[RMDB]
RNA sequence: GGGAACGACUCGAGUAGAGUCGAAAACGGCGUCGAUGAUGCGGUAGGCGUAGCCCUGUUCGGCGAGGAAUCGUUGCCGGUGGGCUGCGUAGUCACUAUCUAGGCUAUCGCGGCUUACUACAGUGUAACUAACGAUUCAGUUCGCUGAAUCGUUAGUAAAAGAAACAACAACAACAAC
Reactivity to 2A3 in 0.01 (KOAc 150mM, MgCl2 10mM, bicine 150mM(pH8.5), 24C), signal-to-noise 4, nucleotides 027 to 126: c020g030g000c020g030u050c030g030a060u090g010a080u130g060c050g040g070u070a030g040g000c040g030u030a030g030c010c000c010u060g120u120u170c040g040g000c010g020a040g020g140a090a090u100c050g070u020u080g030c010c010g020g020u020g000g010g000c010u000g000c000g000u000a010g010u010c000a020c140u110a140u180c070u110a100g050g000c010u010a030u190c020g000c010g020g000c010u030u030a020c010u070a050c040a070g090u090g030u170a050
Reactivity to DMS in 0.01 (KOAc 150mM, MgCl2 10mM, bicine 150mM(pH8.5), 24C), signal-to-noise 7, nucleotides 027 to 126: c090g010g010c020g020u000c020g010a070u010g000a130u010g020c060g010g010u000a050g010g000c040g010u000a110g020c050c010c030u010g010u010u010c070g020g020c000g020a110g010g000a110a070u000c050g000u000u000g010c020c020g010g000u010g010g000g000c000u000g020c010g010u000a010g000u010c030a150c180u010a120u000c210u010a120g000g000c010u000a010u000c030g020c000g000g000c010u000u000a030c040u000a100c160a120g010u010g000u000a130